Record summary
Chemical mapping of a 177-nucleotide RNA with DMS and 2A3. DMS (dimethyl sulfate) methylates the pairing face of unpaired adenines and cytosines. It was measured as part of the RMDB library M2PK90. The RNA was probed in 150 mM KOAc, 10 mM MgCl2 and 150 mM bicine (pH 8.5) at 24 C.

RNA sequence: GGGAACGACUCGAGUAGAGUCGAAAAUGAAAUAAAGCGCACCAAGAUGGAGGUGCGCAACCAGCGUGUCCAUGGAUCACGCAUCGACGCGUCUACCAAGACGCGAAAGGUAUUACAAAUAAAAAAAGAACUUAGUCUGAUUCGUCAGACUAAGUUCAAAAGAAACAACAACAACAAC
Reactivity to DMS in 0.01 (KOAc 150mM, MgCl2 10mM, bicine 150mM(pH8.5), 24C), signal-to-noise 1, nucleotides 027 to 126: u000g000a190a070a070u040a030a040a060g030c000g010c000a010c000c020a100a120g030a280u000g000g000a130g040g000u000g010c000g000c000a000a030c100c030a210g040c010g070u000g000u000c070c060a070u010g020g000a160u010c010a000c000g010c000a040u000c100g000a220c010g000c000g000u000c000u010a130c240c250a050a070g000a000c000g010c000g000a010a120a110g040g010u000a060u000u000a030c190a060a080a030u020a020a030a110a180a020a100a080
Reactivity to 2A3 in 0.01 (KOAc 150mM, MgCl2 10mM, bicine 150mM(pH8.5), 24C), signal-to-noise 1, nucleotides 027 to 126: u040g000a070a050a000u220a040a060a000g010c030g000c020a020c000c020a060a030g150a160u230g090g110a090g020g010u000g000c000g000c010a010a000c010c010a020g040c010g000u000g000u060c030c030a170u120g070g020a080u150c010a010c000g040c000a030u050c020g000a060c010g000c000g000u080c030u020a090c020c030a030a030g000a020c000g000c000g000a000a000a010g000g010u110a040u060u200a130c060a020a130a110u300a070a190a000a010a000a000a040